[RMDB]
RNA sequence: GGGAACGACUCGAGUAGAGUCGAAAAGCAACCAGUGGAGAAGUGGACGGGGCUGUCACAGACACCGGACCUGGCACCACCCCCACCCCCCGCACCCACACACUUUCCUCUGACUGCAGGCAGGGCCGUUAGUGCGUUUAUUCGUAAACGCACUAACAAAAGAAACAACAACAACAAC
Reactivity to DMS in 0.01 (KOAc 150mM, MgCl2 10mM, bicine 150mM(pH8.5), 24C), signal-to-noise 4, nucleotides 027 to 126: g010c060a050a080c040c020a090g020u000g000g020a080g000a150a070g010u000g010g010a170c120g030g000g000g020c070u000g000u000c080a060c060a090g010a120c070a040c110c040g010g010a070c040c040u010g010g020c090a090c060c030a090c020c010c010c020c020a220c030c020c000c000c010c020g030c100a080c040c020c010a040c130a110c110a040c050u000u000u000c010c000u000c050u000g010a090c040u000g010c070a070g000g000c060a050g020g010g010c140c130
Reactivity to 2A3 in 0.01 (KOAc 150mM, MgCl2 10mM, bicine 150mM(pH8.5), 24C), signal-to-noise 1, nucleotides 027 to 126: g040c020a040a060c020c010a030g020u060g050g010a170g020a140a050g030u070g000g040a060c020g020g010g000g100c080u070g050u070c020a090c060a300g060a030c020a070c100c000g040g040a050c000c000u000g040g000c020a030c040c020a010c030c020c000c040c010a050c040c000c000c000c010c020g000c020a040c020c000c000a010c000a010c000a010c090u000u000u020c000c000u000c000u030g000a030c010u010g030c010a010g030g000c000a030g020g030g000c000c010